Conditions: 150 mM KOAc, 10 mM MgCl2 and 150 mM bicine (pH 8.5), 24 C. Structure probing data (2A3) for a 177-nucleotide construct. The 2A3 profile rests on 515 reads. It was measured as part of the RMDB library OK1LIB.
RNA sequence: GGGAACGACUCGAGUAGAGUCGAAAACGUGUGAUACAACCACGCGAUCCAAGGUUCAACGCUGUAUUUGCGAAAUACAUAAAACCCUUGGAGCCUUUGCUCUAUAAGGCAUUGGGCAAACUGUACAGUGCUCGUGGUCUUUCGAGACCACGAGCACAAAAGAAACAACAACAACAAC
Reactivity to 2A3 in 0.01 (KOAc 150mM, MgCl2 10mM, bicine 150mM(pH8.5), 24C), signal-to-noise 2, nucleotides 027 to 126: c000g000u030g000u000g030a020u140a300c090a040a000c040c000a000c000g000c020g010a040u050c000c000a000a000g000g020u070u100c050a070a050c060g070c120u010g080u100a140u110u140u110g120c140g000a070a040a040u000a020c000a000u240a070a130a050a050c000c000c000u000u000g000g000a040g000c000c000u100u050u040g070c020u030c000u040a160u030a270a080g030g000c030a090u010u010g000g000g090c030a050a050a040c030u110g010u140a040c070a030